Record summary
Structure probing data (DMS and 2A3) for a 177-nucleotide construct. The data come from the RNA Mapping Database (RMDB), library OK2TRN. For 2A3, 851 sequencing reads were counted. DMS adducts were read by reverse transcription with MarathonRT. 2A3 is a SHAPE reagent: it acylates the 2'-hydroxyl of flexible nucleotides of all four kinds. Values cover nucleotides 27 to 126.
RNA sequence: GGGAACGACUCGAGUAGAGUCGAAAAUUACAAAAAUUGGCACAUCAAUAUCCGGCAUAUGGCUUUGGUCUUAUGUUCAAUAAGUUACGGCAGUCUGGAUUACCGUGGAAUGUAAAACGGGUAUAUCCGUGAUGGUAAGGUUCGCCUUACCAUCACGAAAAGAAACAACAACAACAAC
Reactivity to DMS in 0.01 (KOAc 150mM, MgCl2 10mM, bicine 150mM(pH8.5), 24C), signal-to-noise 2, nucleotides 027 to 126: u020u030a080c120a070a090a050a080a070u010u010g010g010c060a060c050a070u010c140a090a130u000a050u000c050c040g000g000c030a030u000a070u000g010g000c010u000u000u010g040g000u010c010u020u000a020u000g000u000u000c110a080a050u000a030a080g010u000u010a040c040g010g000c060a100g010u000c030u000g000g000a080u000u000a080c050c020g000u000g020g000a090a060u010g000u000a020a020a060a040c060g010g000g000u000a050u000a060u010c060
Reactivity to 2A3 in 0.01 (KOAc 150mM, MgCl2 10mM, bicine 150mM(pH8.5), 24C), signal-to-noise 1, nucleotides 027 to 126: u050u010a040c050a000a190a010a040a000u060u090g090g050c040a000c010a190u070c040a120a050u010a030u100c010c000g000g000c060a010u060a060u190g160g040c000u110u030u110g030g070u030c000u010u060a040u000g070u020u040c030a040a040u050a120a020g020u050u020a010c010g030g010c030a010g020u040c040u040g040g010a020u040u040a030c010c010g000u060g050g040a120a070u070g000u180a100a050a000a070c040g000g000g000u050a060u000a010u000c070